[RMDB]
RNA sequence: GGGAACGACUCGAGUAGAGUCGAAAAGUACUUUGUGCCUAGAGCUAAGUCUGUUGUCUCAAGGAUUGGAGACUCCAUCUUUACAGGCUGUACUGGCUCUUGGAACAAGGUCACUCAAAUUGCUAACAUGGAACGGAGUUCGCUCCGUUCAAAAGAAACAACAACAACAAC
Reactivity to DMS in 0.01 (KOAc 150mM, MgCl2 10mM, bicine 150mM(pH8.5), 24C), signal-to-noise 9, nucleotides 027 to 129: g030u010a030c030u050u020u010g000u020g050c030c010u000a000g040a030g020c030u000a030a010g000u000c050u000g060u050u060g050u050c080u030c170a080a060g120g020a050u060u080g040g010a090g020a140c150u050c040c020a090u010c070u010u030u020a070c080a030g000g000c010u020g030u040a090c230u010g030g040c000u050c050u000u010g040g020a040a010c010a000a000g000g000u000c030a090c000u030c040a070a120a150u050u070g000c050u060a080a070c170a090u020g060
Reactivity to 2A3 in 0.01 (KOAc 150mM, MgCl2 10mM, bicine 150mM(pH8.5), 24C), signal-to-noise 9, nucleotides 027 to 129: g020u020a000c000u010u000u000g000u010g040c000c010u020a000g000a000g000c010u060a060a000g010u000c020u010g070u090u070g050u040c020u020c080a060a080g200g040a160u190u300g090g010a100g030a070c060u020c040c040a120u060c050u060u160u060a030c010a010g020g000c010u030g040u130a090c090u060g000g000c000u000c000u000u020g000g000a000a000c000a000a000g000g000u010c020a030c000u050c010a070a110a170u170u190g060c050u130a110a070c060a170u150g100
Record summary:
An RNA of 170 nucleotides, treated with DMS and 2A3 and read out base by base. Reactivities are given for positions 27 through 129.